Chemical mapping of a 177-nucleotide RNA with 2A3 and DMS. It was measured as part of the RMDB library M2PK50. For DMS the reverse transcriptase was MarathonRT. For DMS, 1,265 sequencing reads were counted. The 2A3 profile rests on 3,427 reads. The reactions ran in a buffer of 150 mM KOAc, 10 mM MgCl2 and 150 mM bicine (pH 8.5), at 24 C.
RNA sequence: GGGAACGACUCGAGUAGAGUCGAAAAUCAUGUUUGUUCGCAAACAUGAAAAGAAAGCACGAAAAUAAAAUAAAAGGGAAGGGAAGGUGCACCCACCCAUAAAAACGCACGUGUUCGCACGUGCGAAGGAGAAAUAUUACUUCGGUAAUAUUUCUCCAAAAGAAACAACAACAACAAC
Reactivity to 2A3 in 0.01 (KOAc 150mM, MgCl2 10mM, bicine 150mM(pH8.5), 24C), signal-to-noise 3, nucleotides 027 to 126: u010c000a000u000g010u010u020u000g050u020u020c140g000c090a000a000a000c000a000u020g020a010a050a000a020g060a050a090a000g010c020a010c050g110a190a100a100a070u150a030a100a060a020u190a060a100a080a050g010g000g020a060a070g060g010g010a060a030g080g000u010g000c000a020c000c000c010a010c010c010c000a010u160a030a100a020a000a010c000g010c000a000c000g000u000g010u030u050c210g000c050a000c000g000u000g000c000g010a010a000
Reactivity to DMS in 0.01 (KOAc 150mM, MgCl2 10mM, bicine 150mM(pH8.5), 24C), signal-to-noise 2, nucleotides 027 to 126: u000c010a000u000g010u000u000u010g030u030u030c210g030c010a000a010a030c000a000u000g000a000a080a100a100g000a180a070a120g000c000a030c010g000a150a070a130a120u020a060a040a100a040u010a050a040a140a070g010g020g000a120a030g020g000g000a070a030g000g010u010g010c000a250c010c000c010a090c030c010c010a160u020a070a050a020a140a020c000g010c010a010c000g020u000g000u000u000c160g030c000a010c000g010u000g000c000g010a010a040